[RMDB]
RNA sequence: GGGAACGACUCGAGUAGAGUCGAAAACAAAUUGCAGACUAUGCAUUGAUUUAUGGCAGAACUGAUGAAAAUGAAAUGCGUAUGGCGGCUACAACUUCACUAUUUGCACAGUUAUUCACGGUAGAUAUAAUCCCGGUUUUUUCGAAAACCGGGAUUAAAAAGAAACAACAACAACAAC
Reactivity to DMS in 0.01 (KOAc 150mM, MgCl2 10mM, bicine 150mM(pH8.5), 24C), signal-to-noise 2, nucleotides 027 to 126: c070a010a050a100u030u040g000c040a040g000a120c140u010a050u010g000c060a010u000u020g000a110u010u050u010a060u000g010g000c000a010g010a110a060c100u000g060a150u020g010a020a090a010a040u050g000a060a060a040u040g020c130g000u000a040u030g000g000c040g010g020c040u000a040c120a120a050c110u010u000c000a040c040u000a050u010u000u010g050c000a000c060a060g000u010u000a090u000u020c000a040c130g010g000u000a030g010a070u040a090
Source: RMDB library OK1LIB, as collected in RNAgym. An RNA of 177 nucleotides, treated with DMS and read out base by base.